The record gives the reactivity of an RNA of 207 nucleotides to DMS and 2A3. 2A3 adducts were read by reverse transcription with SuperScript II with manganese. It was measured as part of the RMDB library M2RFPK.
RNA sequence: GGGAACGACUCGAGUAGAGUCGAAAAGAGUGAUGUCUCCUAACCUUUAUCAAUGGGGGCACUCGGUCGUGCUGUGGGUAGAAAUUUUAUUUCGUGCCUACCUUAGACGCUUGUCGUCGGGAGUAUGUGGGACUGAUGAACUUCGGUUCAUCAGUAAUCUUGUGUUAGUGUUCGCACUAACACAAGAAAAAGAAACAACAACAACAAC
Reactivity to DMS in 0.01 (KOAc 150mM, MgCl2 10mM, bicine 150mM(pH8.5), 24C), signal-to-noise 2, nucleotides 027 to 156: g000a080g010u010g000a070u010g020u000c000u010c000c030u010a170a160c120c080u000u010u000a140u030c060a090a080u020g030g000g020g010g030c010a040c010u000c000g020g040u020c070g010u000g000c030u000g030u040g000g010g020u070a260g010a010a030a070u000u000u020u000a110u000u040u000c010g000u010g000c030c010u000a030c020c100u030u000a130g000a150c020g000c070u010u000g030u000c010g030u000c010g010g000g000a130g010u000a030u000g010u010g000g010g000a090c000u000g010a040u000g000a010a000c000u000u010c300g040g030u000u000c000a000u000c000a030g010u010a030a170
Reactivity to 2A3 in 0.01 (KOAc 150mM, MgCl2 10mM, bicine 150mM(pH8.5), 24C), signal-to-noise 4, nucleotides 027 to 156: g060a000g020u050g060a080u080g030u010c010u010c010c000u070a130a170c030c060u160u250u210a180u240c160a140a100u190g000g000g010g000g000c000a010c020u020c010g030g010u030c030g040u020g000c050u080g020u030g020g010g010u000a020g100a040a040a030u180u280u140u130a160u080u150u020c010g060u110g000c000c020u000a030c000c010u020u040a050g000a000c010g000c050u110u300g150u300c020g000u000c010g000g030g010a090g010u120a070u160g030u080g040g040g020a000c000u000g000a000u000g000a000a000c000u040u030c120g070g000u000u000c000a000u000c000a000g000u000a000a040